This 177-nucleotide RNA was probed chemically with 2A3 and DMS. The reactions ran in a buffer of 150 mM KOAc, 10 mM MgCl2 and 150 mM bicine (pH 8.5), at 24 C. Source: RMDB library OK1LIB, as collected in RNAgym. DMS adducts were read by reverse transcription with MarathonRT.
RNA sequence: GGGAACGACUCGAGUAGAGUCGAAAACCUAUUCGAUCUAGACGAGGACGACGAGGACACUAAGCCAGUGCCUAAUAGAUCGACCAAGGGUGGACAACAGAAGAACAGUCAAAAGGGCCAGCAUAUACGAUGGUGACGUAUUCGUACGUCACCAUCGAAAAGAAACAACAACAACAAC
Reactivity to 2A3 in 0.01 (KOAc 150mM, MgCl2 10mM, bicine 150mM(pH8.5), 24C), signal-to-noise 3, nucleotides 027 to 126: c000c000u010a020u010u140c000g030a000u000c000u020a040g070a180c130g080a060g050g030a040c040g020a010c030g130a170g030g040a020c060a020c210u160a180a000g070c090c040a030g080u060g110c030c010u010a060a030u060a030g040a020u020c000g000a000c010c010a070a070g060g000g000u090g000g020a010c000a080a000c020a130g070a050a010g030a110a020c030a040g050u050c010a040a110a000a060g040g000g000c000c000a030g080c030a040u120a000u030a170
Reactivity to DMS in 0.01 (KOAc 150mM, MgCl2 10mM, bicine 150mM(pH8.5), 24C), signal-to-noise 2, nucleotides 027 to 126: c010c030u010a120u020u000c020g020a090u000c040u000a030g000a260c180g000a060g030g000a150c010g000a130c010g000a050g040g050a160c080a080c300u050a090a280g020c120c080a100g020u000g000c010c000u020a010a150u080a010g000a020u000c000g000a030c300c100a090a080g000g010g000u030g000g000a060c040a220a090c070a080g030a070a060g050a060a030c170a000g040u010c030a030a010a070a030g000g000g010c030c010a000g020c060a100u010a010u010a180